Source information:
This 207-nucleotide RNA was probed chemically with DMS and 2A3. For 2A3, 3,704 sequencing reads were counted. The RNA was probed in 150 mM KOAc, 10 mM MgCl2 and 150 mM bicine (pH 8.5) at 24 C. 2A3 adducts were read by reverse transcription with SuperScript II with manganese.
RNA sequence: GGGAACGACUCGAGUAGAGUCGAAAACAAGCGAUGCAGAUGAUGAUGACGGCGAUCACUGCCAGCAGACGGGCGAUAUUGCCGGUCAGCAUGUCGACGAUGUUCUGCAAGACGGUUUCGAUACCGGCGGCCUGGGCGAAGGCCGGCUCGACCAUGCCUGUCCAGUAAAUUUCGAUUUACUGGACAGAAAAGAAACAACAACAACAAC
Reactivity to DMS in 0.01 (KOAc 150mM, MgCl2 10mM, bicine 150mM(pH8.5), 24C), signal-to-noise 2, nucleotides 027 to 156: c060a110a100g010c050g040a200u000g020c030a090g010a070u000g010a110u010g030a100u010g000a110c000g030g000c000g020a080u010c300a030c050u010g000c010c010a200g040c110a070g000a100c000g000g020g000c020g010a070u000a100u000u000g030c010c050g000g030u000c020a150g000c060a050u020g040u000c040g000a090c000g000a180u000g000u000u000c030u020g040c030a110a110g010a090c050g020g020u000u000u010c090g000a180u000a000c000c010g020g020c030g020g010c030c020u000g010g030g030c080g010a130a100g020g000c000c000g020g030c070u010c040g000a100c030c010a120u000g000c130
Reactivity to 2A3 in 0.01 (KOAc 150mM, MgCl2 10mM, bicine 150mM(pH8.5), 24C), signal-to-noise 5, nucleotides 027 to 156: c070a080a000g070c050g040a030u060g000c020a030g040a130u100g000a020u030g010a020u050g030a080c030g020g030c020g000a020u040c020a030c080u050g000c000c010a050g040c020a030g080a080c050g070g000g020c030g030a030u030a070u160u130g020c020c010g080g030u040c000a010g010c020a030u050g020u060c010g000a050c050g050a050u110g030u100u040c010u010g010c010a030a000g090a010c020g040g000u040u080u230c080g030a040u110a120c020c010g000g010c010g010g010c020c010u050g040g040g020c110g060a050a030g010g000c020c000g040g000c010u030c020g040a050c010c010a050u100g040c010